[RMDB]
RNA sequence: GGGAACGACUCGAGUAGAGUCGAAAACGUCCCCGUCGUACAGAAUGGUAACAUAUCUCUCCAAAUAUCUGAGCUUGGGUAUACGGGGAAACCCAACCCCUUGGGACGAUUGGGUAUAUGGCUAAAUUACAUCGAUUGUACUUCGGUACAAUCGAAAGGACAGAGUAGACUUCGGUCUACUCUGUCCAAAAGAAACAACAACAACAAC
Reactivity to 2A3 in 0.01 (KOAc 150mM, MgCl2 10mM, bicine 150mM(pH8.5), 24C), signal-to-noise 1, nucleotides 027 to 156: c010g060u020c020c000c000c010g120u160c020g000u070a120c050a090g130a120a150u100g020g030u150a260a030c000a020u080a070u000c090u040c030u040c080c010a050a210a070u230a120u050c010u050g050a050g110c010u030u050g000g010g020u020a030u010a070c000g000g000g000g020a050a000a010c000c000c000a010a080c010c000c000c000u020u050g040g000g050a010c020g020a030u060u100g030g000g000u030a010u030a000u100g050g000c040u020a150a000a040u150u140a050c020a120u020c010g000a000u000u000g010u020a000c000u000u020c120g080g000u000a000c000a000a000u000c000g000a000a000a000

Structure probing data (2A3) for a 207-nucleotide construct. 2A3 is a SHAPE reagent: it acylates the 2'-hydroxyl of flexible nucleotides of all four kinds. Reactivities are rounded to 0.1 and cut off at 0 and 3.